[RMDB]
RNA sequence: GGGAACGACUCGAGUAGAGUCGAAAAGCCGAUGAAUUGCCGAGAAGCCUGGCUCGAAAUCGUCGACGCAUCGACGACGCUCCUGCCAUGAGACCGUAACGAGGACAUGUCGCCUCGAAUGGCGUCGUAUAACAUGAGUGGUUCGCCACUCAUGUAAAGGGGUAUUCAGUUUCGACUGAAUACCCCUAAAAGAAACAACAACAACAAC
Reactivity to 2A3 in 0.01 (KOAc 150mM, MgCl2 10mM, bicine 150mM(pH8.5), 24C), signal-to-noise 1, nucleotides 027 to 156: g060c020c000g000a010u040g050a020a250u140u050g060c060c010g020a020g100a080a020g000c080c120u130g040g000c000u060c010g060a000a000a010u090c020g060u020c010g000a010c080g000c110a170u080c030g030a010c000g010a000c010g030c060u000c030c010u060g030c000c000a060u040g000a010g080a050c030c040g070u040a010a010c030g010a010g000g020a000c010a100u230g040u060c040g000c010c000u020c050g030a050a090u030g000g020c000g040u020c020g000u060a060u060a260a000c000a000u000g010a030g000u030g000g030u100u060c150g030c130c000a010c000u000c000a000u000g000u000a000a010
An RNA of 207 nucleotides, treated with 2A3 and read out base by base. Conditions: 150 mM KOAc, 10 mM MgCl2 and 150 mM bicine (pH 8.5), 24 C. It was measured as part of the RMDB library M2RFPK.